[RMDB]
RNA sequence: GGGAACGACUCGAGUAGAGUCGAAAACAGGAAACUGGUUAAUCGUUUUCCUUGGUAGUAUAGCGGAAACCAUAAAUAAGAAGAACUCUAAGUGCUUGAGUAGAGUUAAAAUAAUUAGACAGGCAAUUAAGGUACUCCACGUUCGCGUGGAGUACAAGGUACCCUAUUGGUUCGCCAAUAGGGUACCAAAAGAAACAACAACAACAAC
Reactivity to 2A3 in 0.01 (KOAc 150mM, MgCl2 10mM, bicine 150mM(pH8.5), 24C), signal-to-noise 2, nucleotides 027 to 156: c060a010g080g070a060a050a000c050u120g060g060u130u140a070a100u180c030g000u000u060u090u040c010c000u010u010g050g000u010a040g000u030a070u080a110g050c070g000g020a050a030a000c030c000a040u080a140a100a010u190a060a070g100a030a020g060a070a020c000u000c000u000a000a000g020u030g190c010u000u000g000a000g010u000a010g010a000g010u140u190a000a000a000a000u110a000a000u220u030a000g000a000c000a000g000g000c010a000a010u120u200a120a030g060g000u000a000c000u010c000c000a010c010g050u060u050c180g000c000g100u000g000g000a000g000u000a000c000a000a000
Annotation:
Chemical mapping of a 207-nucleotide RNA with 2A3. The RNA was probed in 150 mM KOAc, 10 mM MgCl2 and 150 mM bicine (pH 8.5) at 24 C. 2A3 adducts were read by reverse transcription with SuperScript II with manganese.